[RMDB]
Structure probing data (2A3 and DMS) for a 207-nucleotide construct.
RNA sequence: GGGAACGACUCGAGUAGAGUCGAAAACGGUUUCGACAUGAAUGGUUGAUCUUCAAAUGCAGCAGGGUAAGCCCUUUACAGCUGUCGAGGCUAAUAAAUGCUAAGAACAAUAAAAACGAAGCUGUUGAAGUAGAAUUAAACGACUUUGAAAUCAACGCUAUAUUCCUUUGUUCGCAAAGGAAUAUAGAAAAGAAACAACAACAACAAC
Reactivity to 2A3 in 0.01 (KOAc 150mM, MgCl2 10mM, bicine 150mM(pH8.5), 24C), signal-to-noise 5, nucleotides 027 to 156: c030g020g000u010u010u020c010g010a050c080a160u190g130a080a060u110g070g000u030u010g010a040u010c100u060u010c020a020a030a070u110g000c010a010g000c030a000g020g000g010u010a020a010g010c000c000c000u040u220u020a000c020a010g000c010u000g020u030c020g020a020g030g000c020u030a030a030u160a120a290a020u200g010c000u030a050a030g020a100a000c070a140a070u280a140a080a040a000a000c050g050a040a000g000c010u020g000u030u090g030a110a010g020u100a020g030a160a110u140u110a140a140a040c050g070a030c050u050u040u040g020a020a020a010u020c010a030a000c020g000
Reactivity to DMS in 0.01 (KOAc 150mM, MgCl2 10mM, bicine 150mM(pH8.5), 24C), signal-to-noise 2, nucleotides 027 to 156: c070g010g020u010u000u000c020g040a170c110a140u010g020a090a050u000g010g050u020u000g000a070u000c070u000u010c030a020a070a070u010g020c030a070g020c100a070g040g060g030u010a110a100g000c020c010c010u000u000u000a050c190a060g050c000u020g030u000c040g030a260g000g030c000u020a050a110u000a060a110a150u010g010c040u000a060a210g010a090a160c060a050a140u020a020a070a030a140a260c040g000a140a030g020c020u000g050u010u010g020a070a060g000u010a070g010a090a150u000u000a060a020a110c020g000a010c020u000u000u000g000a030a060a030u000c030a010a050c080g000
DMS adducts were read by reverse transcription with MarathonRT.
The DMS profile rests on 2,707 reads.
The data come from the RNA Mapping Database (RMDB), library RSTRND.